[RMDB]
Background
This 207-nucleotide RNA was probed chemically with 2A3 and DMS. Reactivities are given for positions 27 through 156.
RNA sequence: GGGAACGACUCGAGUAGAGUCGAAAAAAACUUACCAUUUACUAUAUGGUCCUUUGUAGGCGAAAUUUAGAGGAUAAAAUCAAACUCUUUAGCUCUCAAGAUCUUCAGUGAUUGCUUCCAAACCAGCCUUUUUUCUAUCCAUAACUAACAGAUGGCCUGUUAUAUCAGUCUUCGGACUGAUAUAACAAAAAGAAACAACAACAACAAC
Reactivity to 2A3 in 0.01 (KOAc 150mM, MgCl2 10mM, bicine 150mM(pH8.5), 24C), signal-to-noise 2, nucleotides 027 to 156: a000a000a000c030u040u030a040c010c000a040u030u140u100a110c050u060a070u050a040u230g010g000u030c020c010u060u050u030g030u080a020g010g000c000g010a030a050a030u080u090u040a080g010a030g040g010a020u050a150a130a010a030u080c030a070a030a120c020u000c000u060u070u070a020g040c020u000c000u010c060a060a050g000a150u010c020u110u050c080a040g040u030g130a100u040u050g020c010u070u010c030c000a060a040a050c030c020a010g100c010c000u030u070u070u030u090u080c030u070a060u020c020c030a060u080a140a150c070u060a090a030c060a020g120a080u100g050g020c000c020
Reactivity to DMS in 0.01 (KOAc 150mM, MgCl2 10mM, bicine 150mM(pH8.5), 24C), signal-to-noise 1, nucleotides 027 to 156: a080a080a060c110u000u030a170c040c010a070u000u000u050a070c090u000a200u020a030u000g010g050u010c020c010u010u000u000g010u000a000g020g000c030g000a040a100a040u020u010u000a110g010a060g010g000a130u000a030a010a010a050u010c030a060a070a010c020u010c000u000u000u000a090g020c020u030c020u020c050a020a080g010a050u000c020u000u000c060a080g020u000g000a110u010u010g010c030u000u000c040c000a040a060a050c050c030a250g000c000c010u000u000u000u000u000u000c030u010a070u000c020c030a070u000a070a120c050u000a060a110c120a090g000a090u000g010g050c040c100
The DMS profile rests on 1,740 reads. The reactions ran in a buffer of 150 mM KOAc, 10 mM MgCl2 and 150 mM bicine (pH 8.5), at 24 C.